Conditions: 150 mM KOAc, 10 mM MgCl2 and 150 mM bicine (pH 8.5), 24 C. Structure probing data (2A3 and DMS) for a 207-nucleotide construct. 2A3 is a SHAPE reagent: it acylates the 2'-hydroxyl of flexible nucleotides of all four kinds. It was measured as part of the RMDB library M2RFPK.
[RMDB]
RNA sequence: GGGAACGACUCGAGUAGAGUCGAAAACAACACGUCCUCGUCGUACAGAGUGGUAACAUGUGUCACCACAUAUCCAAGCGUGGGUACACGGGCUUGACCCAACCCCUUGGGCGGAUGGUGGCACAUGAAAAGAAGUAACACUUCGGUGUUACUUCAACAUUAAAACACUCUUCGGAGUGUUUUAAUGAAAAGAAACAACAACAACAAC
Reactivity to 2A3 in 0.01 (KOAc 150mM, MgCl2 10mM, bicine 150mM(pH8.5), 24C), signal-to-noise 9, nucleotides 027 to 156: c060a010a030c030a020c070g140u080c010c020u040c020g140u040c030g050u150a080c100a090g060a030g050u120g050g070u160a100a010c000a000u000g000u000g000u000c000a000c010c000a010c010a040u160a040u070c000c000a010a010g040c060g140u270g030g000g020u120a060c100a070c150g010g000g010c040u250u300g150a300c010c000c010a010a030c010c000c000c000u020u040g000g020g000c040g100g020a160u020g000g000u000g000g000c000a000c000a000u000g000a000a000a000a010g000a000a000g000u000a000a000c000a000c000u020u040c230g090g000u000g000u000u000a000c000u000u000c000a000a000
Reactivity to DMS in 0.01 (KOAc 150mM, MgCl2 10mM, bicine 150mM(pH8.5), 24C), signal-to-noise 4, nucleotides 027 to 156: c060a090a090c070a070c050g010u000c020c020u000c080g040u000c080g040u010a160c080a090g000a130g020u000g000g000u000a070a170c010a030u000g010u010g020u000c010a030c000c000a010c040a110u010a050u000c010c000a030a050g010c120g030u010g010g020g050u000a060c140a070c070g020g020g020c010u000u000g000a230c010c010c000a110a080c010c000c000c010u000u000g000g020g000c080g020g010a120u000g010g030u000g010g000c010a010c010a000u010g010a030a050a100a130g010a030a030g020u010a020a020c010a010c000u000u010c270g050g030u000g010u000u000a010c000u000u000c010a020a130